[RMDB]
RNA sequence: GGGAACGACUCGAGUAGAGUCGAAAAGAAAUGGUCUCAAAAGAACGGAUUGUUCGAGAAUUAUCCGAGGAAAUAAACUACAGAAUAUUCUACUGUUGUAGGAAUAAAUGGAUAGUACCAUUAGAAAGGGAACAUAAUAGUUCGCUAUUAUGUUCCCAAAAGAAACAACAACAACAAC
Reactivity to DMS in 0.01 (KOAc 150mM, MgCl2 10mM, bicine 150mM(pH8.5), 24C), signal-to-noise 6, nucleotides 027 to 126: g010a100a070a020u010g000g000u010c030u010c120a150a090a090a110g000a060a060c020g000g010a130u010u010g010u010u000c080g010a110g000a080a040u020u010a020u000c010c010g030a110g010g010a070a070a090u040a080a070a040c050u010a060c040a070g000a080a110u010a020u020u010c050u010a100c180u020g010u000u020g000u030a060g000g000a080a040u010a020a040a060u020g000g010a070u000a030g020u020a100c000c010a010u000u000a110g020a050a120a130
Reactivity to 2A3 in 0.01 (KOAc 150mM, MgCl2 10mM, bicine 150mM(pH8.5), 24C), signal-to-noise 3, nucleotides 027 to 126: g070a010a200a000u050g000g030u000c040u030c060a130a180a000a050g020a130a030c030g150g060a200u030u230g080u060u100c050g020a030g030a070a040u140u040a000u020c000c000g010a090g050g080a110a180a010u220a090a050a030c060u100a050c000a040g170a120a070u130a090u110u070c070u060a120c020u050g070u230u080g000u040a030g000g040a000a060u060a030a060a020u100g040g000a000u020a060g040u030a080c000c010a000u050u010a030g100a060a120a020

Chemical mapping of a 177-nucleotide RNA with DMS and 2A3. The reactions ran in a buffer of 150 mM KOAc, 10 mM MgCl2 and 150 mM bicine (pH 8.5), at 24 C.